[RMDB]
RNA sequence: GGGAACGACUCGAGUAGAGUCGAAAAGAAAUGUCCACAGCCGUUUUGACCGAAUUUUUUUCGGACGGGCCAAAUGCGAGUCGGCGGCUGGAUGCUGUUAGGCCCGUUUAAGCAUCGAGGACUAGAAGGGCUGCACGGUGUUCGCAUUGUGUAGCCCAAAAGAAACAACAACAACAAC
Reactivity to DMS in 0.01 (KOAc 150mM, MgCl2 10mM, bicine 150mM(pH8.5), 24C), signal-to-noise 9, nucleotides 027 to 126: g010a060a080a060u020g010u000c000c000a300c020a020g010c000c010g010u000u010u020u020g010a090c000c020g000a030a000u000u000u020u030u020u010u020c040g000g000a040c030g010g000g000c030c060a040a060a070u040g010c070g010a070g010u000c010g010g000c020g000g010c000u010g010g010a010u000g000c000u000g000u010u010a100g010g000c010c000c000g000u010u010u020a070a050g010c010a010u000c010g020a140g000g000a020c010u000a110g000a120a130
Reactivity to 2A3 in 0.01 (KOAc 150mM, MgCl2 10mM, bicine 150mM(pH8.5), 24C), signal-to-noise 9, nucleotides 027 to 126: g100a010a090a020u150g000u010c000c010a020c010a020g000c000c000g010u030u050u160u250g050a030c010c020g040a050a030u130u120u050u020u010u080u150c050g040g010a020c010g020g010g000c000c010a060a120a040u220g080c080g040a030g040u020c010g010g010c000g000g000c010u010g030g000a000u010g000c020u010g040u150u090a060g010g010c000c000c000g010u000u010u020a010a000g000c000a000u020c030g050a050g000g010a010c010u030a030g060a150a120
The record gives the reactivity of an RNA of 177 nucleotides to DMS and 2A3. The data come from the RNA Mapping Database (RMDB), library OK1LIB. The RNA was probed in 150 mM KOAc, 10 mM MgCl2 and 150 mM bicine (pH 8.5) at 24 C. For DMS, 57,919 sequencing reads were counted. The 2A3 profile rests on 17,976 reads. Reactivities are given for positions 27 through 126.